[RMDB]
RNA sequence: GGGAACGACUCGAGUAGAGUCGAAAAUCUAAACAACUUCGGUUGUUUAGAAAAAACCGUAGGCUCCCAGUGGCUUUGAUCUUGUCCAUUCGAAAGAGUGGCAAGGGAGCCAUAGGGAGCCUAAACGGAAAAAUGCAACGGUUUCGACCGUUGCAAACAUAAUCCCUGUGUUCGCACAGGGAUUAUGAAAAGAAACAACAACAACAAC
Reactivity to DMS in 0.01 (KOAc 150mM, MgCl2 10mM, bicine 150mM(pH8.5), 24C), signal-to-noise 1, nucleotides 027 to 156: u010c000u000a000a010a030c000a010a030c000u020u000c300g030g000u000u000g030u010u010u000a030g000a000a080a030a180a140a080c000c010g030u000a050g010g020c010u000c000c000c000a300g060u000g000g000c010u010u000u000g000a080u000c000u030u000g000u010c010c000a030u050u000c010g000a150a080a280g000a040g050u000g000g000c040a010a000g000g000g010a010g020c020c010a050u000a100g010g030g000a040g000c000c000u000a020a000a060c000g020g000a000a060a110a150a180u010g020c000a020a000c000g030g000u010u020u000c240g020a080c020c000g000u020u010g010c000a000a050a140